The data come from the RNA Mapping Database (RMDB), library M2PK90. Chemical mapping of a 177-nucleotide RNA with DMS. Values cover nucleotides 27 to 126. For DMS, 1,604 sequencing reads were counted. The reactions ran in a buffer of 150 mM KOAc, 10 mM MgCl2 and 150 mM bicine (pH 8.5), at 24 C.
RNA sequence: GGGAACGACUCGAGUAGAGUCGAAAAGUUAUGGAAAACGUCUUAGCUACCACUACAACAACAAUGCUGGACGGUGAUGGUUCGACUUACUCGAAACCAACACGUAGUGGUAGUCGUUCCCAUUCAAUCAUUCACUCAUGUUCGCAUGAGUGAAUGAAAAAGAAACAACAACAACAAC
Reactivity to DMS in 0.01 (KOAc 150mM, MgCl2 10mM, bicine 150mM(pH8.5), 24C), signal-to-noise 2, nucleotides 027 to 126: g020u010u020a100u000g020g010a080a060a150a130c020g000u000c020u000u020a040g020c010u000a090c080c030a050c060u000a060c040a080a070c190a100a060c150a050a080u010g040c020u000g020g000a030c050g030g000u000g000a100u010g020g010u000u000c030g020a010c040u000u000a010c050u000c000g000a040a110a050c120c070a040a060c100a080c140g000u000a030g020u000g000g000u000a070g000u000c000g000u000u000c010c000c000a070u010u020c120a030a160